[RMDB]
RNA sequence: GGGAACGACUCGAGUAGAGUCGAAAAGAAAGCCUGCUAGUCAUGCUGACCACAGCCGCCCAGGCAUGGGUGACGGGGCUACCGAGGUACACCAUCAACAGUUGGUUCGAACUGAAGGGGCAGUUAAUCUCAUAUGCGAAUUCGUUCGCAUAUGAGAAAAAGAAACAACAACAACAAC
Reactivity to DMS in 0.01 (KOAc 150mM, MgCl2 10mM, bicine 150mM(pH8.5), 24C), signal-to-noise 5, nucleotides 027 to 126: g000a080a110a070g010c010c010u000g010c050u000a080g010u010c040a030u010g010c010u010g010a120c060c050a100c080a120g020c060c050g010c030c030c020a110g020g010c200a100u010g000g010g010u010g000a060c090g000g000g010g010c040u000a020c080c030g000a050g000g020u020a050c080a090c000c030a070u040c060a050a110c120a050g000u000u020g000g010u000u010c030g000a040a030c050u000g000a110a080g000g010g000g000c040a050g010u000u020a070a160
Reactivity to 2A3 in 0.01 (KOAc 150mM, MgCl2 10mM, bicine 150mM(pH8.5), 24C), signal-to-noise 5, nucleotides 027 to 126: g100a020a060a010g040c010c000u010g040c030u070a030g030u060c030a040u130g030c040u060g040a080c030c010a040c050a090g010c000c010g040c010c030c020a020g040g050c050a060u080g010g000g010u020g030a040c050g020g000g020g020c010u030a040c000c030g050a020g030g030u070a020c050a030c020c030a050u100c020a040a120c020a080g030u030u030g040g020u060u050c030g050a010a010c020u020g020a090a050g000g010g000g000c010a000g010u030u080a070a070